Chemical mapping of a 177-nucleotide RNA with DMS and 2A3. The reactions ran in a buffer of 150 mM KOAc, 10 mM MgCl2 and 150 mM bicine (pH 8.5), at 24 C. Values cover nucleotides 27 to 126. The data come from the RNA Mapping Database (RMDB), library OK2TRN. 2A3 adducts were read by reverse transcription with SuperScript II with manganese.
RNA sequence: GGGAACGACUCGAGUAGAGUCGAAAACACGUGAAAGCCGACCAGCGCGGCACACCCCGGUUCGACGUCUGCCCAGUGUCCGGCGACGCGUAGCACGGCGAUCCCCGACGUCGGGAACUUCUCCGAGGUGUAAUCAAAGGUUCGCCUUUGAUUACACAAAAGAAACAACAACAACAAC
Reactivity to DMS in 0.01 (KOAc 150mM, MgCl2 10mM, bicine 150mM(pH8.5), 24C), signal-to-noise 4, nucleotides 027 to 126: c070a090c170g010u010g010a120a120a110g020c020c010g000a090c040c080a080g020c140g010c050g000g000c030a080c100a060c020c060c010c040g010g000u000u000c020g020a060c030g010u000c010u020g010c040c000c050a120g000u010g010u010c060c040g010g010c020g010a060c050g000c060g000u000a080g010c090a080c060g010g000c030g020a140u000c020c030c000c060g020a080c060g010u000c010g000g000g000a100a130c220u010u000c030u010c020c070g000a110g000
Reactivity to 2A3 in 0.01 (KOAc 150mM, MgCl2 10mM, bicine 150mM(pH8.5), 24C), signal-to-noise 4, nucleotides 027 to 126: c030a000c040g010u050g080a230a070a040g030c020c000g030a040c030c100a140g040c100g010c030g240g050c050a030c000a010c030c020c010c010g040g040u040u050c040g050a100c020g120u010c050u100g030c020c030c020a100g030u070g040u190c100c060g010g030c030g010a040c020g000c020g060u060a030g070c080a020c100g040g020c040g020a180u090c020c000c010c020g030a060c040g030u050c000g010g020g030a040a030c020u090u060c040u000c030c020g050a070g050